This 177-nucleotide RNA was probed chemically with 2A3 and DMS. For DMS, 1,394 sequencing reads were counted. The RNA was probed in 150 mM KOAc, 10 mM MgCl2 and 150 mM bicine (pH 8.5) at 24 C. The 2A3 profile rests on 764 reads. Reactivities are rounded to 0.1 and cut off at 0 and 3.

[RMDB]
RNA sequence: GGGAACGACUCGAGUAGAGUCGAAAAGCCGGAUAGCAGAUAGAGCGUGUGAUUCUUUGGAAACAGCAAAGGAUGGUUUAUCUGAUCUGAAAGACAGUAUUGAUGAAAUCAUUUCUUCACUGGAAGACCAUGGCUUAUCCUUCGGGAUAAGCCAUGGAAAAGAAACAACAACAACAAC
Reactivity to 2A3 in 0.01 (KOAc 150mM, MgCl2 10mM, bicine 150mM(pH8.5), 24C), signal-to-noise 2, nucleotides 027 to 126: g040c000c010g030g030a120u070a080g000c060a030g070a220u200a010g120a040g070c080g010u110g020u060g080a080u040u040c010u050u000u010g050g010a040a160a050c000a030g000c050a030a000a000g000g000a000u000g010g000u000u000u080a040u010c040u040g040a060u030c010u000g130a250a030a000g110a070c000a010g070u110a060u120u260g040a040u100g040a000a000a020u040c010a000u050u100u090c010u030u010c030a030c090u020g000g070a010a000g010a010
Reactivity to DMS in 0.01 (KOAc 150mM, MgCl2 10mM, bicine 150mM(pH8.5), 24C), signal-to-noise 1, nucleotides 027 to 126: g000c080c040g010g000a060u050a140g010c030a120g000a150u000a050g020a080g000c030g020u090g000u050g000a120u080u000c040u010u000u000g000g030a080a030a070c150a060g000c160a160a040a020g020g000a010u000g000g000u010u020u000a050u000c000u000g000a050u000c000u010g010a060a100a130g020a160c030a070g060u060a160u010u000g020a000u000g000a010a040a060u010c090a030u000u000u010c000u000u000c170a150c060u010g000g000a010a070g000a160